[RMDB]
RNA sequence: GGGAACGACUCGAGUAGAGUCGAAAAGAUGGAAAUGUUCGCAUUUCCAUCAAAAAGAUAUGGAAGAAUCGUCGGAAUCAACAGCUCGGAAACGAGACAUGAUUACCCGACGAGUUCUUCCUAAGUCAAAAAAGUGAAGUCCUUCGGGACUUCACAACCCACAUCUGCUAUUCGUAGCAGAUGUGGGAAAAGAAACAACAACAACAAC
Reactivity to 2A3 in 0.01 (KOAc 150mM, MgCl2 10mM, bicine 150mM(pH8.5), 24C), signal-to-noise 1, nucleotides 027 to 156: g020a000u010g000g020a000a000a000u060g000u100u090c230g000c100a000u000u000u000c000c000a010u000c010a000a000a000a000a000g030a010u080a010u080g000g000a000a020g000a020a010u000c020g000u000c020g010g040a020a000u000c010a010a110c020a120g020c000u010c000g050g030a050a050a060c020g010a000g010a020c040a070u110g010a020u010u070a150c000c010c000g030a000c000g020a000g120u190u140c000u010u000c000c000u000a010a010g010u000c060a160a040a000a130a040a000g000u000g020a010a000g000u000c010c000u040u070c270g060g040g030a000c030u000u020c000a000c000a000a080
The record gives the reactivity of an RNA of 207 nucleotides to 2A3. The RNA was probed in 150 mM KOAc, 10 mM MgCl2 and 150 mM bicine (pH 8.5) at 24 C. For 2A3 the reverse transcriptase was SuperScript II with manganese.